[RMDB]
RNA sequence: GGGAACGACUCGAGUAGAGUCGAAAAAGAAUUUGCCGUAACUGGUUUACGUUUACUACAAAUUGAACAAGGAUUUGUAAGUGCAGCUGGUCAAUUAGGUAAAAUUAAAACAGCAGUUACUAUGGUAUCACCGUUCACUUUUCGAAGUGAACGGUGAAAAAGAAACAACAACAACAAC
Reactivity to DMS in 0.01 (KOAc 150mM, MgCl2 10mM, bicine 150mM(pH8.5), 24C), signal-to-noise 1, nucleotides 027 to 126: a030g020a150a030u000u000u000g010c010c010g000u010a020a020c020u000g000g000u010u000u000a050c300g020u000u000u000a060c010u000a090c200a060a020a010u000u020g010a060a020c100a100a140g020g030a090u010u010u000g040u010a060a100g000u000g000c140a110g020c160u010g010g000u010c060a030a060u010u000a090g010g000u010a020a010a010a100u000u000a050a010a060a060c060a160g010c040a010g000u010u000a010c060u020a050u010g040g000u000a080
Reactivity to 2A3 in 0.01 (KOAc 150mM, MgCl2 10mM, bicine 150mM(pH8.5), 24C), signal-to-noise 1, nucleotides 027 to 126: a000g130a050a040u180u060u100g020c010c000g000u000a000a000c000u050g090g010u020u020u020a040c040g000u000u060u030a040c030u000a030c050a000a040a120u070u020g000a120a010c080a150a000g140g060a120u290u270u020g040u160a160a210g050u090g090c010a040g010c000u080g010g030u030c070a030a020u030u010a120g050g010u050a100a010a000a110u060u100a090a010a000a000c070a040g300c000a020g010u020u010a000c000u010a090u210g040g010u020a050